This 177-nucleotide RNA was probed chemically with DMS and 2A3. 2A3 is a SHAPE reagent: it acylates the 2'-hydroxyl of flexible nucleotides of all four kinds. The reactions ran in a buffer of 150 mM KOAc, 10 mM MgCl2 and 150 mM bicine (pH 8.5), at 24 C. Values cover nucleotides 27 to 126. In probing experiments dimethyl sulfate is read out at A N1 and C N3, which are open when not base-paired.
RNA sequence: GGGAACGACUCGAGUAGAGUCGAAAAACAGCAUACGUGCUGAAAGGUGGCAAUGAUGAUUUUUCUUAUUUGUUCACCUGACAAUAUAUGAAGGUGUUCAGUCACUACCUCAUCUGAUGCCAUCUAACACAUUCGGUAUCUUCGGAUACCGAAUGUGAAAAGAAACAACAACAACAAC
Reactivity to DMS in 0.01 (KOAc 150mM, MgCl2 10mM, bicine 150mM(pH8.5), 24C), signal-to-noise 4, nucleotides 027 to 126: a120c020a010g000c010a020u000a050c210g040u000g030c000u000g010a050a070a040g010g060u000g000g000c000a020a180u000g000a030u010g020a010u010u010u030u070u010c100u030u010a040u020u010u020g010u000u010c030a040c040c010u000g000a150c300a080a060u030a080u020a110u000g000a300a010g010g010u000g000u000u000c080a040g000u010c110a030c130u010a070c230c220u000c010a000u000c000u000g020a300u010g020c000c000a000u000c010u000a100a110
Reactivity to 2A3 in 0.01 (KOAc 150mM, MgCl2 10mM, bicine 150mM(pH8.5), 24C), signal-to-noise 7, nucleotides 027 to 126: a010c010a000g010c000a000u020a060c240g160u030g010c000u000g050a220a060a020g030g000u000g000g000c010a040a040u070g000a000u020g030a030u020u050u070u120u060c110u120u210a190u160u140u080g000u020u020c010a000c010c000u000g030a020c020a090a060u120a010u080a080u300g060a060a010g000g020u010g010u010u010c020a040g090u060c040a080c210u170a100c010c020u010c000a000u000c010u040g060a060u170g020c000c010a010u030c010u010a050a010